An RNA of 207 nucleotides, treated with 2A3 and DMS and read out base by base.
DMS adducts were read by reverse transcription with MarathonRT.
RNA sequence: GGGAACGACUCGAGUAGAGUCGAAAAGGACGCGCUGUCGCGUCCGAAUUAACGACAGCAACUAGCCUGUCACCAACCAGGCGAAUUAUGUUGGUGGAAUGAGGCGAAAGCCUCUAUCAGACUGGGACAUAGCAGUCGAAUUAUCUAUGUCAUUAGACCACUCAUCGAUAUUCGUAUCGAUGAGUGGAAAAGAAACAACAACAACAAC
Reactivity to 2A3 in 0.01 (KOAc 150mM, MgCl2 10mM, bicine 150mM(pH8.5), 24C), signal-to-noise 2, nucleotides 027 to 156: g000g000a000c000g040c000g000c020u010g000u010c010g000c010g010u000c000c020g010a000a020u120u030a050a060c000g010a000c000a000g000c010a040a030c060u080a060g000c000c000u010g010u040c000a000c000c000a000a000c000c000a000g000g000c050g050a060a070u170u090a080u120g000u000u000g000g010u010g000g040a060a050u140g000a000g000g000c000g020a060a030a000g000c000c000u000c000u010a070u050c000a000g000a000c000u000g020g020g000a000c000a010u000a020g000c000a010g020u030c110g040a050a020u160u120a010u170c000u010a000u000g010u000c010a000u000u170a050g060a030
Reactivity to DMS in 0.01 (KOAc 150mM, MgCl2 10mM, bicine 150mM(pH8.5), 24C), signal-to-noise 1, nucleotides 027 to 156: g000g010a060c000g050c000g030c030u010g040u010c070g000c000g040u000c030c030g000a020a070u000u000a160a140c000g000a010c010a000g030c130a300a140c190u000a200g060c030c010u010g010u000c050a150c070c090a040a200c090c050a140g000g010c010g000a060a100u000u010a080u000g030u000u000g000g030u000g000g000a260a170u000g000a000g020g010c010g010a120a110a230g030c000c010u000c000u010a010u010c090a150g030a060c010u000g030g000g020a080c010a030u000a030g000c140a130g000u000c040g050a100a030u020u010a080u000c010u000a000u000g010u000c010a260u010u000a100g000a300
2A3 adducts were read by reverse transcription with SuperScript II with manganese. The reactions ran in a buffer of 150 mM KOAc, 10 mM MgCl2 and 150 mM bicine (pH 8.5), at 24 C.